[RMDB]
Chemical mapping of a 207-nucleotide RNA with DMS and 2A3. Reactivities are given for positions 27 through 156. Source: RMDB library OK3TST, as collected in RNAgym.
RNA sequence: GGGAACGACUCGAGUAGAGUCGAAAAUCCCAAAGGUUAGCGAAUCCGAAAGGUACGGAGGAACCGCUUUUUGGGGUUAAUCUGCAGUGAAGCUGCAGUAGGGAUACCUUCUGUCCCGCACCCGACAGCUAACUCCGGAGCUAAUAAAGGAAGGAGACCAUUACCAUGAUUUCGAUCAUGGUAAUGGAAAAGAAACAACAACAACAAC
Reactivity to DMS in 0.01 (KOAc 150mM, MgCl2 10mM, bicine 150mM(pH8.5), 24C), signal-to-noise 2, nucleotides 027 to 156: u000c000c000c020a030a050a040g030g000u000u000a090g030c020g000a260a200u000c030c010g000a090a120a200g010g030u000a120c040g020g000a080g010g000a150a110c080c060g010c160u000u020u000u010u000g060g030g000g000u000u010a060a100u000c010u000g010c020a020g030u000g000a170a150g000c020u010g020c010a020g020u000a050g020g000g020a030u000a100c030c070u000u000c060u040g010u000c100c020c010g000c110a110c020c000c030g010a100c060a040g000c030u010a110a210c010u000c020c000g020g000a230g000c040u010a060a040u000a100a070a060g010g000a090a050g020g000a300g020a260
Reactivity to 2A3 in 0.01 (KOAc 150mM, MgCl2 10mM, bicine 150mM(pH8.5), 24C), signal-to-noise 3, nucleotides 027 to 156: u010c040c000c010a030a170a010g020g000u070u010a000g010c030g040a080a080u060c020c020g040a090a040a000g010g000u020a000c000g000g000a000g010g040a080a080c070c050g000c080u110u090u060u100u240g060g000g010g000u000u010a030a020u020c000u000g000c000a020g010u080g240a120a050g110c000u000g000c010a010g000u010a030g010g010g000a020u100a100c010c000u030u030c010u020g000u000c020c000c000g000c000a030c000c000c000g050a140c120a040g000c010u030a040a010c000u010c000c000g020g010a010g000c000u010a030a010u090a130a110a000g030g010a010a010g030g000a030g070a010

The RNA was probed in 150 mM KOAc, 10 mM MgCl2 and 150 mM bicine (pH 8.5) at 24 C.